[RMDB]
RNA sequence: GGGAACGACUCGAGUAGAGUCGAAAAGUUAUGGAAAACGUCUUAGCUACCACAACAACAACAAUGCUGGACGGUGAUGGUUCGACUUACUCGAAACCAUCACGUAGUGGUAGUCGUUCCCAUUCAAAGAAAGACUGGAAUUCGUUCCAGUCUUUCUAAAAGAAACAACAACAACAAC
Reactivity to DMS in 0.01 (KOAc 150mM, MgCl2 10mM, bicine 150mM(pH8.5), 24C), signal-to-noise 2, nucleotides 027 to 126: g000u000u010a060u000g000g000a120a070a080a210c040g010u000c040u010u000a080g010c020u010a100c050c070a060c070a060a080c110a080a020c130a040a080c150a030a060u000g010c020u000g020g010a030c050g000g020u000g000a050u000g010g010u000u000c020g000a020c150u010u000a060c170u000c000g000a040a040a060c010c010a010u020c060a010c050g000u000a080g020u000g010g000u000a110g000u000c000g010u000u010c000c000c000a090u000u000c090a050a100
Reactivity to 2A3 in 0.01 (KOAc 150mM, MgCl2 10mM, bicine 150mM(pH8.5), 24C), signal-to-noise 1, nucleotides 027 to 126: g030u070u040a070u190g140g020a040a110a000a050c010g000u030c020u120u210a040g000c040u080a050c010c040a030c000a220a080c010a000a030c000a020a000c020a090a220u160g030c000u030g040g000a010c030g010g060u040g000a010u040g010g040u010u020c020g000a030c010u010u080a020c000u030c010g000a100a040a020c010c000a000u020c010a010c020g030u090a030g010u000g000g000u000a010g000u020c000g030u000u000c000c000c000a000u080u090c040a000a040